Conditions: 150 mM KOAc, 10 mM MgCl2 and 150 mM bicine (pH 8.5), 24 C. The record gives the reactivity of an RNA of 207 nucleotides to 2A3 and DMS. The data come from the RNA Mapping Database (RMDB), library OK3TST.
RNA sequence: GGGAACGACUCGAGUAGAGUCGAAAAGAUUUAUCUAAGCUGAAAGAGCUGCUGGAGCUGCGCCGAUCGAUGCAGCUCCCUACACGUGAACACGUAGGACGGUAUAACGAGCUGCUCGAAUGGGCGCGAGAAACGUACUGGCACGUACCGCUGUCCGGAUAGAGGGUAGAUUCGUCUACCCUCUAUCAAAAGAAACAACAACAACAAC
Reactivity to 2A3 in 0.01 (KOAc 150mM, MgCl2 10mM, bicine 150mM(pH8.5), 24C), signal-to-noise 4, nucleotides 027 to 156: g040a020u140u180u110a140u080c050u140a050a010g010c010u020g080a120a120a070g070a070g030c040u030g020c020u050g040g020a030g020c040u030g000c030g000c000c020g130a040u020c000g000a010u230g010c010a010g010c000u000c000c000c000u010a010c050a020c080g120u140g160a230a040c040a010c120g030u040a070g030g000a060c080g070g040u190a160u070a300a060c080g000a000g000c010u000g000c010u000c010g020a070a050u060g120g000g000c000g010c010g000a010g010a010a070a000c070g000u070a060c030u030g040g010c050a020c060g010u050a040c010c050g020c070u030g020u010c020c010g010
Reactivity to DMS in 0.01 (KOAc 150mM, MgCl2 10mM, bicine 150mM(pH8.5), 24C), signal-to-noise 3, nucleotides 027 to 156: g000a110u010u020u000a070u010c050u000a050a100g020c040u020g020a130a150a140g000a120g020c020u000g000c010u010g020g020a130g030c020u000g020c000g020c030c020g000a120u000c050g010a060u000g040c010a000g010c000u000c000c020c010u000a030c030a070c020g000u000g000a140a190c130a050c070g000u000a070g000g000a140c060g010g000u000a100u000a070a140c050g000a070g020c010u000g000c000u010c020g000a070a090u000g000g010g020c010g000c010g000a100g000a030a070a060c090g000u000a020c040u010g010g010c050a060c080g000u000a050c040c040g020c040u000g010u010c020c010g000

For 2A3 the reverse transcriptase was SuperScript II with manganese.